This 207-nucleotide RNA was probed chemically with 2A3. For 2A3 the reverse transcriptase was SuperScript II with manganese. Source: RMDB library RSTRND, as collected in RNAgym.
[RMDB]
RNA sequence: GGGAACGACUCGAGUAGAGUCGAAAAGUAAUCAAUAGUUGCAAACGAUGACAACUACGGUGCUCAACUAGCUGCGUAAGCAGUGAAAGAUCACUUUUAGGGUUACGACCCUAUCGGUCUCUAGCAAGGUGCCUGUAUCGCGCUAUAGACUGUCAACGCGGGUACUAUUGUUCGCAAUAGUACCCGCAAAAGAAACAACAACAACAAC
Reactivity to 2A3 in 0.01 (KOAc 150mM, MgCl2 10mM, bicine 150mM(pH8.5), 24C), signal-to-noise 1, nucleotides 027 to 156: g000u010a000a000u010c040a040a120u010a200g020u010u010g000c050a130a070a090c300g130a290u120g030a140c020a040a010c060u090a090c060g060g010u010g000c020u000c000a000a010c010u000a000g000c020u050g000c000g040u110a030a150g000c010a000g000u000g030a000a000a000g010a000u000c000a000c000u070u000u050u070a170g050g000g030u020u020a000c020g050a060c020c000c020u010a100u090c050g000g000u020c000u010c010u020a000g060c090a120a070g050g050u060g080c040c130u190g130u220a050u090c000g000c000g010c020u000a000u000a010g000a000c020u040g100u130c040a080a050c110